[RMDB]
RNA sequence: GGGAACGACUCGAGUAGAGUCGAAAAUGGGUUCACAUCCCCAACCCGCGGGCCGGCUGUUCUUCUUUCUCUUUCCUCGUCUUCCUCGGUCAACCUCCGGAGUUCCUCUUCCUCCUCCUUGCUGAGGCAAGUAAGGAGGCUUCGGCCUCCUUACUUGAAAAGAAACAACAACAACAAC
Reactivity to DMS in 0.01 (KOAc 150mM, MgCl2 10mM, bicine 150mM(pH8.5), 24C), signal-to-noise 1, nucleotides 027 to 126: u010g030g010g000u000u000c130a140c150a160u010c080c000c020c140a030a090c080c040c010g030c100g020g020g000c060c030g010g000c080u000g000u000u000c050u000u000c040u000u000u000c030u010c040u010u000u000c000c020u000c050g000u000c030u000u000c050c020u010c020g030g010u020c040a050a130c070c020u000c010c060g000g000a110g010u000u010c030c010u000c040u000u000c020c010u010c000c000u000c030c040u000u010g000c090u010g020a090g020g010